[RMDB]
RNA sequence: GGGAACGACUCGAGUAGAGUCGAAAACAGCGGCCGACAGGAGUAAUUCCCGCCGAAACAGGGUUUUCACCCUUCCUUUCUUCGGGUGUCCUUCCUCGCGCCCGCAGGACCACCCCUCGCCCCCUUUGCGCUGUCGCUUCGGCUACUACCCGGUGGAGUUAUCUAUUUUCUUCGGAAAAUAGAUAACAAAAGAAACAACAACAACAAC
Reactivity to 2A3 in 0.01 (KOAc 150mM, MgCl2 10mM, bicine 150mM(pH8.5), 24C), signal-to-noise 1, nucleotides 027 to 156: c040a000g000c020g020g020c010c060g020a040c140a090g000g010a010g030u100a040a020u120u020c000c000c000g000c010c010g030a020a030a030c300a080g000g020g030u190u220u300u300c180a090c000c000c000u030u010c010c000u060u000u000c000u020u020c000g000g000g000u020g010u090c020c000u020u010c000c000u040c020g020c040g050c070c100c010g000c020a020g000g100a040c030c060a010c000c050c000c000u060c040g010c000c020c010c000c050u030u050u070g000c010g030c030u040g020u040c000g000c140u040u050c000g040g000c040u100a160c000u000a030c050c000c040g010g030u020g020g020a070